[RMDB]
RNA sequence: GGGAACGACUCGAGUAGAGUCGAAAAGAUAUGGAUCCAUCUAAAACGCUUGGAUUUAAGCUCGGAAACGAGCUUUGUCAGCGUCAAGAGUGGAUCCUAAGUCAAAACAAUCCCUUCGGGGAUUGAAUCAUAGAACUAACUUCGGUUAGUUCUAUGAAAAAGAAACAACAACAACAAC
Reactivity to DMS in 0.01 (KOAc 150mM, MgCl2 10mM, bicine 150mM(pH8.5), 24C), signal-to-noise 6, nucleotides 027 to 126: g010a050u010a300u010g000g010a010u000c000c000a040u000c010u010a060a200a200a010c000g010c000u010u020g020g000a020u000u010u000a010a010g010c000u000c010g010g000a110a100a210c010g010a010g010c000u000u000u000g000u000c010a030g010c010g000u000c030a280a060g000a060g020u000g000g000a000u000c000c000u000a020a100g010u010c040a100a100a130a250c010a010a000u000c000c000c000u000u010c230g030g000g000g000a000u010u000g000a100a140
Reactivity to 2A3 in 0.01 (KOAc 150mM, MgCl2 10mM, bicine 150mM(pH8.5), 24C), signal-to-noise 5, nucleotides 027 to 126: g030a020u070a040u150g000g010a000u000c000c010a010u030c020u060a130a110a040a030c010g020c030u130u300g250g020a100u300u300u110a000a010g000c000u000c010g020g000a010a090a060c000g000a000g010c030u010u000u010g000u010c000a000g000c010g010u010c020a050a030g040a040g190u060g010g000a000u000c010c000u000a020a010g010u030c020a000a030a110a190c000a000a010u000c000c010c000u000u020c300g080g000g010g010a010u010u020g010a010a040